[RMDB]
RNA sequence: GGGAACGACUCGAGUAGAGUCGAAAAGUACCUAAAGGUCUCACUGGUAAAAUUGACGGUAAAGCAAUUAGAGAAAUACUGAAGAAACCAGUUGCUAAGGGAUCCAUGGAAGCGCCAGCAGCAGCGGCACAGAACGUUAAUUCGUUAACGUUCUGUGAAAAGAAACAACAACAACAAC
Reactivity to 2A3 in 0.01 (KOAc 150mM, MgCl2 10mM, bicine 150mM(pH8.5), 24C), signal-to-noise 9, nucleotides 027 to 126: g020u070a080c010c000u040a070a050a090g030g010u020c020u010c040a030c030u030g000g060u110a050a100a130a150u070u090g050a060c040g020g070u100a080a080a030g060c050a070a110u130u110a090g040a020g050a160a100a060u150a040c080u100g050a100a040g040a080a080a010c010c000a000g010u020u090g050c060u060a030a050g010g010g020a020u000c040c010a040u080g040g050a070a050g040c020g000c020c010a020g010c010a000g020c010a000g010c040g050g000
Reactivity to DMS in 0.01 (KOAc 150mM, MgCl2 10mM, bicine 150mM(pH8.5), 24C), signal-to-noise 7, nucleotides 027 to 126: g010u010a120c010c000u010a050a130a170g000g000u000c010u020c020a070c020u000g000g000u010a050a060a090a070u010u010g000a300c030g000g010u000a030a090a130g020c070a080a090u020u030a100g020a150g010a120a070a120u000a030c020u000g010a050a230g000a070a080a050c020c000a010g010u010u020g010c130u020a090a100g000g000g000a050u010c020c060a180u010g010g000a060a070g000c070g000c010c030a030g010c030a070g000c050a050g000c040g000g010